Chemical mapping of a 177-nucleotide RNA with DMS and 2A3.
RNA sequence: GGGAACGACUCGAGUAGAGUCGAAAACUUACGGAAACCGAAGUCUUAGAUGUUCGUGAUGUAGAAAUUACAGCAGAAAACGUGGAUUUUCUUCGUAUCGGAGCAAGGAAUAUGCAAAACUUUGUCCUACAACUCCUUGUUUCGACAAGGAGUUGUAAAAAGAAACAACAACAACAAC
Reactivity to DMS in 0.01 (KOAc 150mM, MgCl2 10mM, bicine 150mM(pH8.5), 24C), signal-to-noise 2, nucleotides 027 to 126: c070u000u000a030c090g000g010a070a080a100c080c080g000a050a040g020u010c050u000u000a100g020a120u010g010u000u000c080g010u000g000a110u010g000u000a040g000a080a100a120u010u000a030c010a020g010c060a050g000a060a010a030a030c070g000u010g000g000a090u000u000u000u000c030u000u000c030g000u000a100u010c050g000g020a030g020c030a030a000g000g000a060a070u010a060u020g010c170a090a050a060a150c070u000u000u020g030u000c070c040
Reactivity to 2A3 in 0.01 (KOAc 150mM, MgCl2 10mM, bicine 150mM(pH8.5), 24C), signal-to-noise 1, nucleotides 027 to 126: c000u020u000a000c000g100g040a050a080a070c030c000g040a050a000g020u000c010u060u150a200g010a170u110g050u060u030c110g070u030g050a030u060g030u060a030g040a030a070a010u200u020a010c000a010g040c010a000g050a070a120a010a010c080g020u090g030g010a100u000u100u190u080c000u090u080c010g060u040a020u040c070g030g030a030g060c050a020a030g100g060a060a130u130a030u200g000c000a040a050a020a000c020u010u080u010g060u030c000c030
Record summary:
For DMS, 1,487 sequencing reads were counted. The reactions ran in a buffer of 150 mM KOAc, 10 mM MgCl2 and 150 mM bicine (pH 8.5), at 24 C.